Structure probing data (DMS and 2A3) for a 177-nucleotide construct. The data come from the RNA Mapping Database (RMDB), library OK2TST.
RNA sequence: GGGAACGACUCGAGUAGAGUCGAAAAACGCGGUCGAGGUUGAUCCGUUGGUGUGCGAACGCCCCGCUGGCGAUGUCGCGGGUGGCGGUCAGCAACUCCCGGAAACUCAUCGCCGAUUGCGGUCGCACGUACGGAGGCGUUUCGACGCCUCCGUACGAAAAGAAACAACAACAACAAC
Reactivity to DMS in 0.01 (KOAc 150mM, MgCl2 10mM, bicine 150mM(pH8.5), 24C), signal-to-noise 2, nucleotides 027 to 126: a070c080g010c100g020g020u000c000g000a190g010g040u000u000g000a040u010c000c020g000u000u000g030g030u000g040u000g000c000g000a030a040c030g000c000c050c030c040g030c150u010g010g010c010g010a050u010g030u000c040g030c040g010g000g010u000g000g030c040g000g010u020c110a070g030c010a100a070c060u000c030c030c000g020g000a050a090a130c190u010c040a010u000c000g010c030c010g000a050u000u000g020c000g000g000u010c040g000c060a100
Reactivity to 2A3 in 0.01 (KOAc 150mM, MgCl2 10mM, bicine 150mM(pH8.5), 24C), signal-to-noise 2, nucleotides 027 to 126: a000c020g000c000g030g040u050c050g020a110g130g180u130u130g030a020u010c010c020g050u000u090g040g000u090g000u000g010c030g000a070a000c020g060c030c040c000c010g000c040u080g010g020c020g060a110u180g010u100c080g000c040g140g000g030u030g000g070c020g010g100u160c050a020g010c020a040a130c010u040c030c000c000g000g020a050a080a020c070u070c040a040u020c020g050c080c000g020a000u000u200g010c030g020g020u040c000g020c070a030